Notes
Structure probing data (2A3 and DMS) for a 177-nucleotide construct. For DMS the reverse transcriptase was MarathonRT. Source: RMDB library TTRDEL, as collected in RNAgym.
[RMDB]
RNA sequence: GGGAACGACUCGAGUAGAGUCGAAAAGAUAUGGAGGAUUCAGAACUACCCUGGUCGGAAACGACCAAGGCUGACGGUCCUCCUAAGUCAAAAUCAUACCCUUUCGCUUCGGCGAAAGGGUAUGAAAGCUACUUCACAAGUUCGCUUGUGAAGUAGCAAAAGAAACAACAACAACAAC
Reactivity to 2A3 in 0.01 (KOAc 150mM, MgCl2 10mM, bicine 150mM(pH8.5), 24C), signal-to-noise 2, nucleotides 027 to 126: g020a010u030a070u210g010g010a020g030g010a030u300u300c060a040g080a260a130c060u100a060c110c000c020u000g020g000u020c000g020g000a080a040a060c010g000a010c000c000a000a000g000g030c020u010g030a040c040g030g000u000c000c000u000c000c000u000a050a000g020u000c020a030a010a010a280u040c010a000u010a010c000c000c000u000u000u010c010g000c030u020u060c150g210g040c020g020a000a000a000g010g000g010u000a000u000g000a000a000a000
Reactivity to DMS in 0.01 (KOAc 150mM, MgCl2 10mM, bicine 150mM(pH8.5), 24C), signal-to-noise 1, nucleotides 027 to 126: g010a020u000a300u000g000g010a000g000g030a010u010u030c010a110g010a070a050c120u010a130c010c010c020u000g010g050u000c000g010g000a130a080a160c010g000a000c010c000a000a000g040g010c030u000g000a270c300g000g000u010c000c000u000c000c000u000a010a070g000u010c050a140a080a080a190u000c000a000u000a010c000c000c000u000u000u000c000g000c010u000u060c200g010g000c000g010a010a000a000g030g010g000u000a020u000g000a020a090a180